[RMDB]
RNA sequence: GGGAACGACUCGAGUAGAGUCGAAAAGGCAAGUAGAUAAGAUCAUACGAACUUCACCAGAUCUUAAUCUGAUUAAUACGUAUUUACCUUCUUUACCAAGUACUUGAGCACUUGCACCAGCUGAACGAGUGUAGAGCUGAUUCGUCAGCUCUACACUAAAAGAAACAACAACAACAAC
Reactivity to DMS in 0.01 (KOAc 150mM, MgCl2 10mM, bicine 150mM(pH8.5), 24C), signal-to-noise 3, nucleotides 027 to 126: g010g020c070a050a080g020u010a010g010a050u000a020a000g000a080u000c210a120u000a060c070g000a100a160c250u010u010c120a040c030c070a000g010a010u000c250u000u010a070a050u010c030u000g000a090u010u000a060a040u000a100c070g000u010a020u010u000u000a100c050c040u000u000c060u000u000u000a070c150c040a070a070g010u010a020c080u020u000g000a080g030c060a060c020u000u020g000c070a180c030c010a070g020c070u010g010a050a140c170g010
Reactivity to 2A3 in 0.01 (KOAc 150mM, MgCl2 10mM, bicine 150mM(pH8.5), 24C), signal-to-noise 2, nucleotides 027 to 126: g060g040c030a040a010g010u040a020g090a060u060a070a010g010a030u040c000a020u040a070c040g070a100a050c080u160u120c070a040c060c020a040g000a060u000c050u040u200a150a150u010c020u020g040a070u040u120a030a060u070a090c010g020u050a090u050u100u080a060c010c010u080u020c010u010u090u030a050c060c010a040a050g050u040a050c060u060u080g060a020g080c020a030c090u030u060g000c000a050c070c010a050g130c050u040g070a070a020c040g040